[RMDB]
Structure probing data (DMS) for a 177-nucleotide construct. Values cover nucleotides 27 to 126. For DMS, 1,475 sequencing reads were counted. It was measured as part of the RMDB library TTRINS.
RNA sequence: GGGAACGACUCGAGUAGAGUCGAAAAGAUAUGGACCCUUUGUCAGCUUACUCAGCCGAAGAACUACAGUAUCGGAAACGAUACUGUAGGGAGGCUGUUGUAAGCUUGGAUUUAAGGGUCCUAAGUCCAAAGGUGAGAACUUCGGUUCUCACCUUUGAAAAGAAACAACAACAACAAC
Reactivity to DMS in 0.01 (KOAc 150mM, MgCl2 10mM, bicine 150mM(pH8.5), 24C), signal-to-noise 1, nucleotides 027 to 126: g000a080u000a300u000g020g010a020c000c000c000u000u000u000g000u000c000a010g000c010u000u000a000c000u010c000a010g040c020c010g020a150a220g000a120a300c000u000a000c020a010g000u000a000u000c000g010g010a100a160a230c000g000a010u010a000c000u010g000u000a000g010g000g010a040g000g030c000u000g010u010u010g020u000a010a010g010c010u000u000g000g010a000u010u000u000a030a030g000g010g010u000c010c010u010a010a090g010u000c060